[RMDB]
RNA sequence: GGGAACGACUCGAGUAGAGUCGAAAAGAUAUGGAUGUGUUGUGGAGUAGACGAUCGGAAACGAUACCGUCGCAGAUACCACACCACAUCCUAAGUCAAAAUCGCAUCUUGUUCGCAAGAUGCGAAAGUAUAGUUAGUACUUCGGUACUAACUAUACAAAAGAAACAACAACAACAAC
Reactivity to 2A3 in 0.01 (KOAc 150mM, MgCl2 10mM, bicine 150mM(pH8.5), 24C), signal-to-noise 7, nucleotides 027 to 126: g020a020u060a030u130g000g000a000u000g010u000g000u030u010g000u010g020g050a100g020u070a050g020a010c010g000a010u020c010g000g030a060a040a030c020g020a010u070a260c160c040g000u000c010g000c010a000g020a060u140a120c000c000a000c000a000c000c000a000c000a000u000c000c000u000a040a010g030u000c020a020a000a020a290u030c000g000c000a000u000c000u020u020g030u080u050c180g030c140a010a000g000a010u010g000c000g010a010a000a000
Reactivity to DMS in 0.01 (KOAc 150mM, MgCl2 10mM, bicine 150mM(pH8.5), 24C), signal-to-noise 9, nucleotides 027 to 126: g010a030u000a300u010g000g010a010u000g010u000g010u000u000g010u000g010g000a090g010u000a040g010a030c000g010a040u000c000g010g000a080a080a210c020g010a020u000a080c250c020g000u000c000g010c110a140g010a080u000a040c000c000a010c000a010c030c000a000c000a000u000c000c000u000a010a080g010u010c030a080a070a100a140u000c000g010c000a010u000c000u000u000g000u000u010c210g020c010a000a000g000a010u000g000c000g000a000a010a060
This 177-nucleotide RNA was probed chemically with 2A3 and DMS. Source: RMDB library TTRDEL, as collected in RNAgym. For DMS, 21,140 sequencing reads were counted. Conditions: 150 mM KOAc, 10 mM MgCl2 and 150 mM bicine (pH 8.5), 24 C. 2A3 is a SHAPE reagent: it acylates the 2'-hydroxyl of flexible nucleotides of all four kinds.